RNA sequence: GGGAACGACUCGAGUAGAGUCGAAAAAAAGAUAUGGAUAACGACAUGCGAGAAGGACGCGAUGAAACAUUCUCGGAAACGAGAAUGUGGAGCGUCCGGAUCGCAACAGCGUUAUCCUAAGUCAAAAGAUCUUAUUAUCCUUCGGGAUAAUAAGAUCAAAAGAAACAACAACAACAAC
Reactivity to 2A3 in 0.01 (KOAc 150mM, MgCl2 10mM, bicine 150mM(pH8.5), 24C), signal-to-noise 5, nucleotides 027 to 126: a000a000a020g100a020u130a050u150g000g000a010u000a010a010c000g180a060c040a090u070g000c000g000a010g010a060a010g010g000a000c000g030c010g300a300u040g010a010a010a000c000a000u000u000c000u000c000g030g020a070a080a020c010g000a000g000a010a000u010g000u000g000g000a000g000c000g000u010c000c010g000g000a000u000c000g000c010a000a000c010a000g020c000g000u000u000a000u000c000c000u000a070a010g070u030c030a060a010a060a140
Reactivity to DMS in 0.01 (KOAc 150mM, MgCl2 10mM, bicine 150mM(pH8.5), 24C), signal-to-noise 7, nucleotides 027 to 126: a090a090a090g000a040u010a300u010g010g000a020u000a000a010c000g000a050c100a290u010g000c000g010a000g000a300a160g000g000a000c000g030c000g020a080u010g000a190a110a020c000a010u000u000c010u000c000g000g000a050a070a080c010g010a010g000a010a000u000g000u000g000g000a030g010c000g020u000c000c010g000g000a240u000c000g020c000a020a020c250a100g010c020g000u000u000a000u000c000c000u000a010a110g000u000c040a060a090a140a150